[RMDB]
RNA sequence: GGGAACGACUCGAGUAGAGUCGAAAACACUCGCGUACCCGGGAUGGUGCGGCUUCGUUGGUUCGGGUCUGUCGCGGUUGGUGAAGUCUGUCGCGUCAGGGCGUGCACAGGCAGGGUGAAGACGUAAGGAGCAUGUUGCCUUCGGGUAACAUGCUCCAAAAGAAACAACAACAACAAC
Reactivity to 2A3 in 0.01 (KOAc 150mM, MgCl2 10mM, bicine 150mM(pH8.5), 24C), signal-to-noise 2, nucleotides 027 to 126: c020a000c030u030c000g000c020g030u060a050c010c000c000g060g020g010a090u090g010g130u160g000c020g010g010c030u040u080c070g080u030u090g030g040u040u050c010g020g000g040u000c000u040g010u000c010g020c010g060g060u040u190g080g020u150g030a020a010g040u020c020u020g050u000c020g000c000g020u010c130a060g000g000g110c000g080u080g040c040a030c000a040g090g030c000a010g000g020g000u050g050a000a010g010a020c000g030u090a000a130
Reactivity to DMS in 0.01 (KOAc 150mM, MgCl2 10mM, bicine 150mM(pH8.5), 24C), signal-to-noise 1, nucleotides 027 to 126: c070a060c090u010c020g000c070g000u000a040c090c030c020g000g010g000a040u000g000g000u050g000c040g000g000c020u000u010c060g000u000u050g000g000u000u070c070g000g030g000u010c030u000g000u000c000g030c090g030g010u000u000g010g000u000g030a070a090g020u000c020u000g000u010c070g020c000g040u000c020a190g000g000g000c050g000u000g000c140a100c060a060g000g010c000a090g000g010g000u010g020a150a150g000a100c120g000u030a110a130
Structure probing data (2A3 and DMS) for a 177-nucleotide construct. The RNA was probed in 150 mM KOAc, 10 mM MgCl2 and 150 mM bicine (pH 8.5) at 24 C. For DMS the reverse transcriptase was MarathonRT.